[RMDB]
RNA sequence: GGGAACGACUCGAGUAGAGUCGAAAACGGCUCGGUCAUUGCGGCGCAGAAGGCACAUUUCAAGGCAAUCCUUUCGGCGGCGCCGGACCUGCCUGCGGUGAUCUACAACAGCCCCUAUUACGGCUUAGACCGGGUAGUAUUUCGAUACUACCCGGUCAAAAGAAACAACAACAACAAC
Reactivity to 2A3 in 0.01 (KOAc 150mM, MgCl2 10mM, bicine 150mM(pH8.5), 24C), signal-to-noise 1, nucleotides 027 to 126: c030g020g010c030u080c140g020g040u000c030a030u000u100g040c080g020g100c110g000c010a000g010a030a040g030g000c000a010c010a260u060u160u060c080a050a040g080g050c040a100a060u120c010c000u090u190u110c030g040g010c020g010g000c010g000c000c000g030g030a010c000c000u000g000c000c000u020g000c030g060g000u030g020a090u040c010u070a040c060a090a010c010a110g060c050c010c040c000u050a040u260u150a150c120g060g000c070u000u020a000
Reactivity to DMS in 0.01 (KOAc 150mM, MgCl2 10mM, bicine 150mM(pH8.5), 24C), signal-to-noise 2, nucleotides 027 to 126: c150g020g000c000u010c220g000g020u000c020a000u000u000g020c040g000g000c090g010c070a200g040a030a110g000g030c270a070c080a150u000u000u010c170a080a210g010g060c120a120a130u010c040c000u000u010u000c100g000g040c090g000g000c020g030c000c070g000g000a090c060c000u000g020c010c010u020g060c020g000g010u000g000a060u000c040u040a030c110a070a100c170a120g020c020c010c030c080u000a090u030u010a090c140g000g000c060u000u000a130
Structure probing data (2A3 and DMS) for a 177-nucleotide construct. The reactions ran in a buffer of 150 mM KOAc, 10 mM MgCl2 and 150 mM bicine (pH 8.5), at 24 C. Reactivities are rounded to 0.1 and cut off at 0 and 3. For 2A3 the reverse transcriptase was SuperScript II with manganese. Source: RMDB library OK2TST, as collected in RNAgym.